[RMDB]
An RNA of 177 nucleotides, treated with 2A3 and read out base by base.
For 2A3 the reverse transcriptase was SuperScript II with manganese.
The data come from the RNA Mapping Database (RMDB), library OK1LIB.
The RNA was probed in 150 mM KOAc, 10 mM MgCl2 and 150 mM bicine (pH 8.5) at 24 C.
RNA sequence: GGGAACGACUCGAGUAGAGUCGAAAAGGAACUAUGUUCGUACAUGAAGCCUCCACGUGUUUGUUUCGACGUCCGUAGACGGUCGAGCAUAGUUAAGAUCUGGAGGAGGCACGGAUCAAAAUAAAAACGUUGAUGAACUGUUCGCAGUUCAUCGACGAAAAGAAACAACAACAACAAC
Reactivity to 2A3 in 0.01 (KOAc 150mM, MgCl2 10mM, bicine 150mM(pH8.5), 24C), signal-to-noise 2, nucleotides 027 to 126: g110g030a030a000c010u020a010u020g000u020u020c040g040u140a010c000a040u010g050a060a010g000c000c000u030c000c000a030c040g040u040g070u010u200u150g220u030u230u150c060g030a020c010g020u020c030c060g120u070a150g030a140c110g000g000u050c000g000a000g000c000a000u000a000g000u000u100a260a050g000a010u000c000u010g040g000a090g010g000a000g020g040c020a000c000g000g000a000u020c050a020a030a010a030u180a030a060a010a010a000